[RMDB]
RNA sequence: GGGAACGACUCGAGUAGAGUCGAAAAAGAGCCACGUUGAAGGCGACGACGAGCAGUUCCUGACGAUUGCAUUGCAGGCUGCAGCAAGUGAGGCCCGCAGGGGUCAUGGAAAGGUGGCUGUGCAACUCGGAGCCGAGUGAUUCGUCACUCGGCUCCGAAAAGAAACAACAACAACAAC
Reactivity to 2A3 in 0.01 (KOAc 150mM, MgCl2 10mM, bicine 150mM(pH8.5), 24C), signal-to-noise 1, nucleotides 027 to 126: a000g200a010g010c000c000a120c000g140u020u110g110a120a060g070g060c100g010a060c000g120a000c040g000a020g060c060a020g000u170u110c000c030u050g040a040c110g050a120u020u160g150c140a130u250u000g000c000a040g050g010c000u000g000c030a040g010c080a000a090g120u060g000a000g000g130c000c000c000g040c040a040g180g000g070g000u040c000a000u020g020g000a040a120a000g050g000u000g030g010c000u040g040u030g020c000a040a000c050u060